[RMDB]
RNA sequence: GGGAACGACUCGAGUAGAGUCGAAAAGCAAACUAAUAUGCAUAGUCCUGAUGUUAUAGUAGGUGACUAUGUCAUUAUUAGUGAAAAAUUGUUUGUGCGUAGUAAGGAAGAAGACGGAUUUGCCUUCGUACUCUCAUUUGUUCGCAAAUGAGAGUACAAAAGAAACAACAACAACAAC
Reactivity to 2A3 in 0.01 (KOAc 150mM, MgCl2 10mM, bicine 150mM(pH8.5), 24C), signal-to-noise 3, nucleotides 027 to 126: g040c010a160a000a060c000u010a000a000u010a010u030g020c000a000u000a010g010u000c010c010u040g050a060u070g080u220u160a190u110a240g090u020a010g000g070u130g030a000c000u000a000u020g020u070c020a010u030u110a000u000u000a010g010u000g010a060a020a000a000a030u100u070g050u050u030u100g090u010g030c040g000u020a010g040u030a100a110g040g030a060a040g010a060a000g030a020c040g050g000a080u090u040u120g020c010c000u030u050c030
Reactivity to DMS in 0.01 (KOAc 150mM, MgCl2 10mM, bicine 150mM(pH8.5), 24C), signal-to-noise 4, nucleotides 027 to 126: g010c080a080a080a060c000u000a000a000u000a020u000g000c010a020u000a000g010u000c000c000u000g010a170u000g020u020u030a110u010a200g020u000a180g010g010u010g010a010c000u000a000u010g000u030c030a000u010u010a000u000u000a000g010u000g010a050a050a060a110a120u000u010g010u000u010u000g020u000g020c110g010u010a060g010u010a100a070g000g000a090a060g010a050a040g000a050c040g010g000a090u010u000u010g010c030c030u010u000c110